[RMDB]
Record summary:
Source: RMDB library M2PK50, as collected in RNAgym. Structure probing data (DMS and 2A3) for a 177-nucleotide construct.

RNA sequence: GGGAACGACUCGAGUAGAGUCGAAAAUGGACUGCGUUCGCGCAGUCCAAAAGAAUAGACGAACACUAGCGUAGAAGUGUUCAGGUGACAUAACUACGCAAAAAAGCUGAGUGUUCGCACUCAGCAAUACUUAUGCUACGUUCGCGUAGCAUAAGUAAAAAGAAACAACAACAACAAC
Reactivity to DMS in 0.01 (KOAc 150mM, MgCl2 10mM, bicine 150mM(pH8.5), 24C), signal-to-noise 5, nucleotides 027 to 126: u010g000g010a010c000u000g020c000g030u010u010c220g020c000g040c010a010g020u000c000c000a010a000a060a090g010a110a100u020a070g010a090c060g010a040a050c060a040c070u000a120g020c010g020u000a010g010a110a180g010u000g000u000u000c010a090g010g010u000g000a060c060a050u000a050a290c000u000a010c000g030c010a010a050a050a090a100a100g000c000u000g000a020g010u000g000u000u020c190g010c010a010c020u000c000a000g010c000a060a040
Reactivity to 2A3 in 0.01 (KOAc 150mM, MgCl2 10mM, bicine 150mM(pH8.5), 24C), signal-to-noise 4, nucleotides 027 to 126: u060g000g000a010c000u000g000c000g020u030u050c110g000c010g000c090a000g000u010c000c000a000a010a000a000g010a040a030u140a080g110a060c070g020a080a000c020a010c050u070a050g010c000g020u020a010g020a180a020g010u010g010u030u020c060a020g130g130u160g020a010c010a040u100a090a060c010u000a010c000g000c000a020a140a000a000a030a000g000c000u000g000a010g000u020g010u060u100c170g000c030a000c000u010c000a000g000c000a010a040
The 2A3 profile rests on 9,711 reads.
For DMS the reverse transcriptase was MarathonRT.